RNA sequence: GGGAACGACUCGAGUAGAGUCGAAAAGAUAUGGAUGUAGCUCCAUACUACCCACCUUUAUCGGAAACGAUAAAGAGGUAUGCGAGCGCAGAUAUCCUAAGUCAAAACACCAACUUCGGUUGGUGAACUGUUUAAGAAAGUUCGCUUUCUUAAACAGAAAAGAAACAACAACAACAAC
Reactivity to 2A3 in 0.01 (KOAc 150mM, MgCl2 10mM, bicine 150mM(pH8.5), 24C), signal-to-noise 7, nucleotides 027 to 126: g040a030u070a040u120g020g000a010u020g060u190a040g000c000u000c010c000a010u010a010c010u110a090c010c030c010a020c010c010u010u010u010a010u000c010g040g040a100a040a050c000g000a000u010a010a010a010g020a010g000g000u000a000u020g190c300g040a010g000c030g010c110a010g070a300u050a010u050c000c020u060a200a040g070u050c050a000a000a090a120c000a010c010c010a010a010c010u040u090c300g130g000u000u000g000g000u000g000a020a010
Reactivity to DMS in 0.01 (KOAc 150mM, MgCl2 10mM, bicine 150mM(pH8.5), 24C), signal-to-noise 8, nucleotides 027 to 126: g010a060u000a300u010g000g000a030u000g010u000a120g010c010u000c010c010a010u000a010c020u000a120c020c010c030a300c180c000u000u000u000a000u010c000g000g000a120a110a160c010g010a010u000a000a010a010g000a140g000g000u000a000u000g000c210g000a010g010c010g020c170a050g010a050u000a070u000c010c000u000a080a140g000u000c040a090a090a130a200c000a010c000c000a000a010c000u000u010c180g020g000u000u000g010g010u000g000a030a090